Chemical mapping of a 177-nucleotide RNA with 2A3 and DMS. The reactions ran in a buffer of 150 mM KOAc, 10 mM MgCl2 and 150 mM bicine (pH 8.5), at 24 C. It was measured as part of the RMDB library OK2TST. 2A3 adducts were read by reverse transcription with SuperScript II with manganese.
RNA sequence: GGGAACGACUCGAGUAGAGUCGAAAACUGGUGCGCCUCGUCGAAGAUGAUCGUGUUCGCGCUCGGCAGCAAUUCGGCCAUCCCGGUGUCGCGCAACAUGAUGUCCGCGAAGAACAGAUGGUGAUUACGUAGUGAGGGGUUUCGACCCCUCACUACGAAAAGAAACAACAACAACAAC
Reactivity to 2A3 in 0.01 (KOAc 150mM, MgCl2 10mM, bicine 150mM(pH8.5), 24C), signal-to-noise 2, nucleotides 027 to 126: c010u070g030g070u060g030c010g000c000c000u000c020g040u010c000g060a060a030g000a030u200g020a070u030c010g010u030g000u040u040c110g000c000g020c090u010c060g050g000c030a040g040c000a050a170u190u160c030g060g000c020c000a030u050c020c000c000g030g000u050g050u120c000g010c000g000c010a010a010c020a040u090g040a020u080g040u080c010c030g020c040g030a050a050g040a140a010c080a010g080a100u080g000g060u070g040a070u080u180a070
Reactivity to DMS in 0.01 (KOAc 150mM, MgCl2 10mM, bicine 150mM(pH8.5), 24C), signal-to-noise 2, nucleotides 027 to 126: c050u000g020g000u020g020c050g030c020c000u010c000g040u000c000g020a100a100g000a050u000g000a030u000c020g030u000g000u000u000c100g010c020g070c030u000c050g010g010c120a190g020c040a080a130u020u000c130g010g010c050c040a060u010c140c000c020g000g000u000g000u020c060g010c000g000c170a050a060c020a020u000g000a070u030g000u000c080c110g030c040g020a030a050g000a070a050c100a080g000a080u010g000g010u010g000a110u010u010a170